[RMDB]
RNA sequence: GGGAACGACUCGAGUAGAGUCGAAAAUUAUGAGUCUGACAUACAUUGGCAUUUUGUGCAUGCCUUUAAUUGUCUGACAUAUUGUGGUACUGAGCUGUGACAUGGGAACGAUUACUAGACCUGCUUUUGCUCAUGAAGAAACUGAGCUCAGAGAGGAAGUCAGGUAUAUGUUCGCAUAUACCUGACUAAAAGAAACAACAACAACAAC
Reactivity to 2A3 in 0.01 (KOAc 150mM, MgCl2 10mM, bicine 150mM(pH8.5), 24C), signal-to-noise 6, nucleotides 027 to 156: u190u090a100u110g040a030g050u020c020u050g000a000c000a010u060a020c040a040u030u020g010g000c010a010u060u060u080u270g150u130g080c050a020u030g000c000c000u010u000u020a130a090u050u010g000u000c020u050g010a000c030a010u110a030u020u060g050u050g020g040u050a050c000u020g010a020g000c000u010g020u050g070a020c010a060u050g000g010g050a120a060c050g080a110u090u150a100c070u070a090g090a120c000c020u070g070c070u110u100u090u140g030c010u010c020a030u030g030a030a090g070a040a090a010c070u080g020a030g000c000u010c010a020g010a010g000a010g060g090a100
Reactivity to DMS in 0.01 (KOAc 150mM, MgCl2 10mM, bicine 150mM(pH8.5), 24C), signal-to-noise 3, nucleotides 027 to 156: u000u000a100u000g020a180g020u000c020u000g000a050c010a020u000a170c130a050u000u000g000g060c020a050u010u010u010u000g010u020g040c300a070u010g020c010c010u000u010u010a050a250u010u000g010u010c020u010g010a040c020a150u010a060u010u010g030u000g010g020u010a110c050u000g000a040g020c000u010g010u020g020a110c040a070u000g010g010g010a050a090c070g000a070u010u000a110c120u000a120g020a110c040c050u000g010c050u000u000u000u000g000c000u000c030a070u000g000a060a120g000a140a100a170c080u000g010a050g020c000u010c020a080g000a160g030a120g020g030a100
Chemical mapping of a 207-nucleotide RNA with 2A3 and DMS.